[RMDB]
RNA sequence: GGGAACGACUCGAGUAGAGUCGAAAAUUACCUGGGCACCAUUAUUGACCAGACAAGCGAUCAAUAUCUUAUCCGCUUUGAUGACCAGUCGGAGCAAUGGUGUGAACCGGAUAAGCUGCGCAAGCUACACUCACCUAGGGUUCGCCCUAGGUGAGUGAAAAGAAACAACAACAACAAC
Reactivity to DMS in 0.01 (KOAc 150mM, MgCl2 10mM, bicine 150mM(pH8.5), 24C), signal-to-noise 2, nucleotides 027 to 126: u000u010a090c050c000u000g010g000g030c050a040c060c070a030u000u000a050u020u010g010a050c010c040a200g000a290c230a080a090g000c060g020a060u030c100a110a050u010a030u000c060u000u010a040u000c130c030g020c110u000u000u010g000a090u010g010a130c160c070a150g040u000c010g010g010a080g010c060a070a070u010g010g020u000g000u000g010a060a070c060c020g000g010a050u000a000a010g010c200u000g000c150g040c200a100a070g010c070u020a160
Reactivity to 2A3 in 0.01 (KOAc 150mM, MgCl2 10mM, bicine 150mM(pH8.5), 24C), signal-to-noise 2, nucleotides 027 to 126: u080u070a140c020c000u050g060g040g000c010a010c020c010a000u000u000a020u120u150g050a060c000c020a040g070a100c070a060a020g060c000g070a080u030c060a050a070u060a100u130c080u150u110a000u050c020c030g030c080u070u010u090g050a080u050g040a060c110c000a030g030u000c010g050g000a030g000c080a000a120u010g000g010u000g040u020g020a020a030c020c000g040g000a040u060a110a010g000c030u040g000c060g030c110a030a040g000c010u050a030

Source: RMDB library OK2TST, as collected in RNAgym. This 177-nucleotide RNA was probed chemically with DMS and 2A3. For DMS, 1,315 sequencing reads were counted. 2A3 adducts were read by reverse transcription with SuperScript II with manganese.